The record gives the reactivity of an RNA of 177 nucleotides to 2A3 and DMS.
The reactions ran in a buffer of 150 mM KOAc, 10 mM MgCl2 and 150 mM bicine (pH 8.5), at 24 C.
As a SHAPE reagent, 2A3 marks flexible, mostly unpaired nucleotides at the ribose 2'-OH.
Source: RMDB library M2PK90, as collected in RNAgym.
For 2A3, 2,050 sequencing reads were counted.
For DMS the reverse transcriptase was MarathonRT.
The DMS profile rests on 622 reads.
RNA sequence: GGGAACGACUCGAGUAGAGUCGAAAAUCAAAGAGCGUCGCACACACGCAGACAAAGUCUGCUGCAUGCAGAGCCUAAACCGCAGGCUCUGUGUGCGAGAUAUCGUUCAAAAUGCAUGCAGAAAAAAGCUCAUGUACUCGUUCGCGAGUACAUGAGCAAAAGAAACAACAACAACAAC
Reactivity to 2A3 in 0.01 (KOAc 150mM, MgCl2 10mM, bicine 150mM(pH8.5), 24C), signal-to-noise 2, nucleotides 027 to 126: u120c030a090a070a030g040a020g000c010g090u040c000g020c010a000c000a000c000a010c040g040c010a010g020a010c070a110a300a030g010u000c010u000g000c020u010g010c020a000u020g000c030a000g000a010g000c000c010u110a160a120a070c040c020g110c160a000g020g000c000u000c030u030g000u010g000u010g010c030g010a000g000a000u170a040u200c020g030u080u010c040a070a080a020a040u050g030c010a000u000g000c000a010g080a030a140a030a000a000a020
Reactivity to DMS in 0.01 (KOAc 150mM, MgCl2 10mM, bicine 150mM(pH8.5), 24C), signal-to-noise 1, nucleotides 027 to 126: u040c180a180a150a060g000a050g040c010g060u000c000g000c020a010c010a020c020a110c250g000c010a030g000a000c030a160a120a150g000u000c000u000g030c000u000g000c040a010u000g060c000a000g000a000g000c000c010u010a050a020a180c130c100g010c210a000g000g000c000u000c000u000g000u010g000u000g000c010g020a060g040a050u020a090u020c030g050u000u000c080a030a040a060a060u000g040c000a040u000g040c030a040g020a000a050a080a090a010a100